Annotation:
Structure probing data (2A3 and DMS) for a 177-nucleotide construct.

RNA sequence: GGGAACGACUCGAGUAGAGUCGAAAAAGCACAAUGACUAAUCGCCAGUACCAUCAGAAAAUGCUUAAGUCCAUGGCUGCAACUCGUGGAGCGACUUGCGUCAUUGGUACUACAAAGUUCUACGGUGGGACUGAUAGAAGUUCGCUUCUAUCAGUCCAAAAGAAACAACAACAACAAC
Reactivity to 2A3 in 0.01 (KOAc 150mM, MgCl2 10mM, bicine 150mM(pH8.5), 24C), signal-to-noise 2, nucleotides 027 to 126: a010g020c060a050c050a050a120u110g040a030c010u060a110a050u050c030g000c030c000a010g000u020a050c000c000a020u020c000a000g100a070a080a010a040u130g020c040u060u050a030a030g030u040c020c010a010u030g010g000c080u130g000c050a010a000c020u010c010g000u090g200g070a200g100c020g000a020c020u000u000g000c030g010u000c000a030u060u140g040g000u060a010c000u000a010c000a060a060a010g000u050u030c010u070a050c020g030g020u030g050
Reactivity to DMS in 0.01 (KOAc 150mM, MgCl2 10mM, bicine 150mM(pH8.5), 24C), signal-to-noise 1, nucleotides 027 to 126: a040g000c050a030c040a080a080u000g010a010c030u000a180a060u000c060g010c030c030a010g010u030a120c020c030a010u000c060a010g000a070a050a070a120u020g060c040u000u000a090a120g010u000c040c000a040u000g010g000c030u030g020c040a030a030c060u000c000g030u000g050g010a190g080c030g010a010c180u000u000g020c030g030u000c030a030u000u010g000g000u030a020c000u000a130c150a100a040a060g000u000u000c020u060a160c250g000g030u000g010
The RNA was probed in 150 mM KOAc, 10 mM MgCl2 and 150 mM bicine (pH 8.5) at 24 C.
The DMS profile rests on 725 reads.
Values cover nucleotides 27 to 126.
High DMS reactivity at an A or C suggests that its Watson-Crick edge is free.